[RMDB]
RNA sequence: GGGAACGACUCGAGUAGAGUCGAAAACUGCUGAUCAGCUGAGGGUUAGCCGGUCCUAAGUCUCACCGCAACUCGACUGAGACGAAAUGGGAAACAGGUUAAUAUUCCUGUGCCAUCAUGCAGUGAAAGUUGACGCCCUGGGGUCGAUCACGCCGGGACAUUUCAAUCGUUUCGACGAUUGAAAUGUAAAAGAAACAACAACAACAAC
Reactivity to DMS in 0.01 (KOAc 150mM, MgCl2 10mM, bicine 150mM(pH8.5), 24C), signal-to-noise 2, nucleotides 027 to 156: c000u000g050c030u010g020a050u000c090a070g010c040u000g000a020g030g020g020u000u000a040g010c000c000g010g020u000c020c010u000a100a170g000u010c020u010c010a060c040c000g010c110a250a170c170u010c020g020a190c010u000g000a040g020a080c040g000a030a140a100u000g010g020g010a120a100a030c000a020g000g030u000u000a090a090u000a250u000u000c020c010u020g030u000g030c020c060a040u000c020a020u030g040c000a030g000u000g040a050a060a070g010u000u000g010a140c040g000c000c010c010u000g000g000g020g040u010c040g010a220u000c060a040c030g000c030c000g060g010g000
Reactivity to 2A3 in 0.01 (KOAc 150mM, MgCl2 10mM, bicine 150mM(pH8.5), 24C), signal-to-noise 4, nucleotides 027 to 156: c000u000g000c000u010g010a010u020c070a040g020c030u110g150a040g020g010g030u010u010a000g010c010c000g020g030u060c000c000u030a090a020g000u000c000u010c010a040c010c020g050c150a080a130c040u020c050g030a030c040u030g000a000g000a000c010g020a080a100a110u170g010g000g020a080a120a090c070a080g030g010u020u020a030a020u040a130u160u130c000c000u030g060u110g030c020c000a010u010c000a010u220g000c000a000g010u010g030a100a060a020g020u020u030g010a030c040g060c000c010c020u050g000g010g000g040u070c090g050a070u130c060a040c110g110c060c000g030g020g020